[RMDB]
RNA sequence: GGGAACGACUCGAGUAGAGUCGAAAAAUGAAUUGAUUCGUCAAUUCAUGACGGCAAGCGAGCCGAAAGGCAUUUUAUGCGUACGCUGGCGAAAGCCUAAAAAUCAUCGUGUCUUCGGACACGAUAACGCAACAGCUAGAUUCGUCUAGCUGUUGCGAAAAGAAACAACAACAACAAC
Reactivity to 2A3 in 0.01 (KOAc 150mM, MgCl2 10mM, bicine 150mM(pH8.5), 24C), signal-to-noise 2, nucleotides 027 to 126: a000u010g010a000a000u000u000g030a010u030u050c140g020u030c110a030a030u020u000c010a010u010g050a010c020g010g040c020a060a020g050c020g060a030g020c010c020g100a150a020a000g130g000c000a010u080u060u080u170a110u170g000c000g030u030a050c080g020c030u020g010g020c040g040a100a020a030g020c000c000u060a090a070a000a000a000u130c050a010u000c010g010u000g010u000c000u000u020c160g040g010a000c020a010c020g000a000u010a000a030
Reactivity to DMS in 0.01 (KOAc 150mM, MgCl2 10mM, bicine 150mM(pH8.5), 24C), signal-to-noise 1, nucleotides 027 to 126: a020u010g000a040a000u010u000g000a050u000u010c250g010u000c000a000a010u000u000c000a000u000g010a180c060g020g000c060a110a240g010c040g000a080g020c000c000g000a010a060a140g000g010c010a090u000u010u000u010a060u010g010c000g030u000a120c280g020c040u010g000g010c010g010a070a040a100g010c000c010u000a010a050a030a030a130u000c110a040u000c000g000u000g010u000c000u000u000c160g000g000a000c000a000c000g000a000u000a020a110
The record gives the reactivity of an RNA of 177 nucleotides to 2A3 and DMS. It was measured as part of the RMDB library M2PK50. For 2A3, 1,798 sequencing reads were counted. The RNA was probed in 150 mM KOAc, 10 mM MgCl2 and 150 mM bicine (pH 8.5) at 24 C.